[RMDB]
The data come from the RNA Mapping Database (RMDB), library TTRDES. Structure probing data (DMS and 2A3) for a 177-nucleotide construct. For DMS, 2,738 sequencing reads were counted. For DMS the reverse transcriptase was MarathonRT. 2A3 adducts were read by reverse transcription with SuperScript II with manganese.
RNA sequence: GGGAACGACUCGAGUAGAGUCGAAAAGAUAUGGAAUCCAUGUAGGGAGCUCCGGAUCGGAAACGAUCCGAAGAGCUUUGAUCUAUGGGAUUCCUAAGUCAAAGGAGCUUUGUUCGCAAAGCUCCAAUCAAAAAUACAAGUUCGCUUGUAUUUUUGAAAAAGAAACAACAACAACAAC
Reactivity to DMS in 0.01 (KOAc 150mM, MgCl2 10mM, bicine 150mM(pH8.5), 24C), signal-to-noise 2, nucleotides 027 to 126: g000a040u000a070u020g010g000a020a010u000c000c000a140u000g030u000a020g010g010g010a030g030c000u010c010c020g010g010a000u000c000g010g000a040a000a040c000g020a020u000c000c000g020a090a100g010a010g000c000u000u000u010g000a020u000c010u000a020u010g010g000g010a040u000u000c000c010u010a000a090g000u000c010a100a170a270g010g010a000g020c000u000u000u000g020u020u020c240g010c000a000a000a020g000c000u000c000c020a000a030
Reactivity to 2A3 in 0.01 (KOAc 150mM, MgCl2 10mM, bicine 150mM(pH8.5), 24C), signal-to-noise 1, nucleotides 027 to 126: g010a010u030a020u050g010g000a010a000u000c010c030a080u190g060u170a040g050g040g100a020g030c010u030c000c000g010g000a000u000c000g040g000a060a020a010c010g000a000u020c040c000g040a130a060g010a010g000c000u140u200u140g000a000u000c010u000a030u070g250g000g000a000u010u000c000c000u000a050a020g010u020c100a160a070a160g020g000a000g010c000u000u030u040g040u150u160c300g000c300a020a000a010g000c000u000c000c000a000a030